Source information
This 177-nucleotide RNA was probed chemically with DMS and 2A3. For 2A3, 1,321 sequencing reads were counted. The RNA was probed in 150 mM KOAc, 10 mM MgCl2 and 150 mM bicine (pH 8.5) at 24 C.

RNA sequence: GGGAACGACUCGAGUAGAGUCGAAAACUACACCUCAUCGCGAAUCGGUCGUCCGCGUGCCAUUCAAUUCGUUGAUGAUGCGGGUGUUAUCCUGGAGGAGCAUCAACUGGAGACCACCUUGGCGGGAUCGCAUCCAGUCAUUCGUGACUGGAUGCGAAAAAGAAACAACAACAACAAC
Reactivity to DMS in 0.01 (KOAc 150mM, MgCl2 10mM, bicine 150mM(pH8.5), 24C), signal-to-noise 2, nucleotides 027 to 126: c100u000a030c060a070c010c040u000c010a090u000c010g000c010g020a020a010u000c050g040g000u000c200g020u010c060c100g040c100g030u010g020c020c020a130u020u010c180a080a040u000u000c040g030u000u000g020a070u010g000a040u000g040c190g010g010g010u010g010u000u000a140u000c030c020u000g000g030a180g000g000a090g030c010a030u000c070a080a090c100u010g000g000a080g040a130c140c040a030c050c060u000u000g010g030c020g010g000g000a140
Reactivity to 2A3 in 0.01 (KOAc 150mM, MgCl2 10mM, bicine 150mM(pH8.5), 24C), signal-to-noise 1, nucleotides 027 to 126: c010u050a020c000a040c030c000u000c030a000u000c000g000c020g010a040a020u030c050g030g050u000c010g060u050c040c080g060c070g010u130g020c000c000a030u170u170c020a060a110u000u060c040g070u050u280g050a050u070g000a030u110g030c140g010g000g030u060g020u050u090a030u070c010c000u020g040g000a040g040g070a030g030c040a070u080c020a050a070c040u040g000g010a020g070a040c020c000a030c000c010u010u030g000g010c040g040g020g010a050